[RMDB]
RNA sequence: GGGAACGACUCGAGUAGAGUCGAAAAGGGCGCCGCGGGACGGCCCGCGCGAGCGGGAGGACGGCGGGGCGAUAGCAGGUCUGUGAUGCCCUCAGACGCCCUGGGCCGCACGCGCGCUACACUGGCGUCUAGCGAUGACUUUCGAGUCAUCGCUAGAAAAAGAAACAACAACAACAAC
Reactivity to 2A3 in 0.01 (KOAc 150mM, MgCl2 10mM, bicine 150mM(pH8.5), 24C), signal-to-noise 3, nucleotides 027 to 126: g040g020g010c020g020c050c050g000c030g010g020g060a080c070g090g020c000c020c000g000c010g000c020g030a010g000c000g000g000g010a030g020g030a090c010g030g020c000g000g000g010g000c010g060a080u090a060g100c120a010g000g080u070c030u060g130u100g100a140u200g020c000c000c000u020c020a120g010a140c000g000c000c010c000u010g010g150g000c000c000g000c000a000c010g000c000g000c010g000c010u040a020c060a000c040u080g060g010c000g040
Reactivity to DMS in 0.01 (KOAc 150mM, MgCl2 10mM, bicine 150mM(pH8.5), 24C), signal-to-noise 3, nucleotides 027 to 126: g000g000g030c020g040c090c080g010c060g030g000g000a150c190g010g000c020c030c000g000c040g000c250g010a130g000c000g000g010g020a120g000g000a210c020g020g010c020g020g020g000g010c000g010a110u000a120g020c140a030g000g010u020c050u020g000u020g010a140u030g000c110c000c020u000c110a140g010a140c010g020c020c000c000u000g010g000g050c010c000g000c090a050c030g050c040g030c010g020c000u000a070c070a090c050u010g020g010c090g000